[RMDB]
RNA sequence: GGGAACGACUCGAGUAGAGUCGAAAAGUGCUUGGCUCUGCCUGUCUGUGGGGCCGCCCAGCCAGCCCACCAUGCAGUUGGAAGACUUUGCAGCUGAUGCUUUUGGCAGCUGAGGGGCUCCUUGGAGGCUGGGCUGGGCCAGACUGGGUGUCGGGGCAAAACUUACUUCUUUCGAGAAGUAAGUUUUAAAAGAAACAACAACAACAAC
Reactivity to DMS in 0.01 (KOAc 150mM, MgCl2 10mM, bicine 150mM(pH8.5), 24C), signal-to-noise 1, nucleotides 027 to 156: g020u010g010c040u010u000g050g010c020u000c030u000g030c030c020u000g010u040c020u000g020u000g020g030g010g050c030c040g040c020c010c020a010g020c000c020a170g030c020c000c030a120c060c010a080u000g050c050a090g030u010u000g060g010a110a090g000a050c060u000u000u010g030c000a050g020c030u000g010a100u000g000c210u010u000u000u000g050g020c080a100g000c010u000g010a040g010g020g010g000c020u020c060c020u000u000g000g010a160g010g030c020u030g020g000g040c020u000g000g020g030c000c020a010g010a070c000u010g020g020g030u010g000u000c050g010g020g000g010c070
Reactivity to 2A3 in 0.01 (KOAc 150mM, MgCl2 10mM, bicine 150mM(pH8.5), 24C), signal-to-noise 2, nucleotides 027 to 156: g140u110g040c060u070u070g010g000c010u010c020u070g040c000c010u060g040u080c010u020g100u110g020g050g110g050c010c020g080c050c000c010a000g000c010c000a020g000c020c000c020a110c010c010a050u150g030c050a050g040u160u150g080g020a120a040g080a190c030u100u070u160g040c060a010g000c000u020g020a130u110g050c060u200u270u190u300g140g000c000a000g000c010u010g000a100g020g010g010g000c000u030c000c010u020u010g020g030a010g010g020c030u040g030g040g000c000u000g000g000g000c010c000a000g030a040c000u030g010g010g040u070g060u030c090g000g010g000g030c000
Structure probing data (DMS and 2A3) for a 207-nucleotide construct. The DMS profile rests on 3,066 reads. 2A3 adducts were read by reverse transcription with SuperScript II with manganese. The 2A3 profile rests on 1,028 reads. The reactions ran in a buffer of 150 mM KOAc, 10 mM MgCl2 and 150 mM bicine (pH 8.5), at 24 C. Values are in units of 0.01, from 0 to 300, in steps of 10. It was measured as part of the RMDB library OK3TST. For DMS the reverse transcriptase was MarathonRT.